The record gives the reactivity of an RNA of 207 nucleotides to DMS.
[RMDB]
RNA sequence: GGGAACGACUCGAGUAGAGUCGAAAAAAACAAUAAAUGCCGAACCUAAGGCUGAAUGCGAAAUUAUCAGCUUCGCUGAUCUCGAAGAUCUAAGAGUAGCUGCUUAAUUAGCAAAGUUGUUACCUAAAUACGGGUGACCCGGUGUUCGCGAGCUCCACUGUAAAAGGAUCUUCGGAUCCUUUUACAGAAAAGAAACAACAACAACAAC
Reactivity to DMS in 0.01 (KOAc 150mM, MgCl2 10mM, bicine 150mM(pH8.5), 24C), signal-to-noise 2, nucleotides 027 to 156: a050a020a030c090a070a160u010a030a050a090u010g000c000c010g000a110a130c210c040u030a070a120g000g030c020u030g000a040a160u010g000c030g010a200a080a050u000u000a010u000c010a060g000c010u000u010c010g030c060u010g000a000u000c000u010c180g010a120a110g010a050u000c020u020a040a060g000a100g040u000a010g010c010u000g000c080u010u000a040a030u010u010a300g060c020a060a060a090g020u010u000g020u000u010a060c010c000u000a030a050a120u010a120c090g000g000g000u000g010a200c040c010c040g010g010u010g000u000u000c070g020c000g040a170g030c050u010c040c010a220

The reactions ran in a buffer of 150 mM KOAc, 10 mM MgCl2 and 150 mM bicine (pH 8.5), at 24 C. The DMS profile rests on 2,630 reads.